[RMDB]
RNA sequence: GGGAACGACUCGAGUAGAGUCGAAAACGAGGCACAGGCACGCACGUCCAGAAGUGACCGCGUUAGAUCAGUGCUGGAGCAUGGAUUUCGUUGCUGAUAAUCUGUUCAACGGGCAUCGGGUCAGGGCCCUAAGAAUUCCCUUCGGGGAAUUCUUAGGAAAAGAAACAACAACAACAAC
Reactivity to DMS in 0.01 (KOAc 150mM, MgCl2 10mM, bicine 150mM(pH8.5), 24C), signal-to-noise 2, nucleotides 027 to 126: c120g030a100g010g000c030a050c030a090g010g000c050a070c020g000c060a070c180g010u010c020c040a160g000a140a120g000u010g020a050c020c090g000c040g010u010u010a080g020a070u010c050a030g020u010g030c060u000g000g000a130g000c050a080u000g020g000a080u000u000u010c040g000u000u010g010c080u000g030a080u010a070a070u000c020u010g010u020u000c040a070a090c070g000g000g000c050a070u000c080g020g000g000u000c020a060g010g000g030c070
Reactivity to 2A3 in 0.01 (KOAc 150mM, MgCl2 10mM, bicine 150mM(pH8.5), 24C), signal-to-noise 1, nucleotides 027 to 126: c060g040a040g010g000c030a020c010a050g000g060c000a000c030g030c010a020c080g040u000c040c010a100g080a300a040g110u070g130a150c010c040g030c020g040u050u090a040g000a180u010c030a030g020u000g020c000u030g040g050a020g000c000a040u080g080g070a060u030u060u100c030g070u170u070g020c040u000g000a090u030a190a100u100c030u110g050u100u080c040a080a030c000g060g020g000c010a010u060c070g010g000g020u030c010a010g040g000g040c010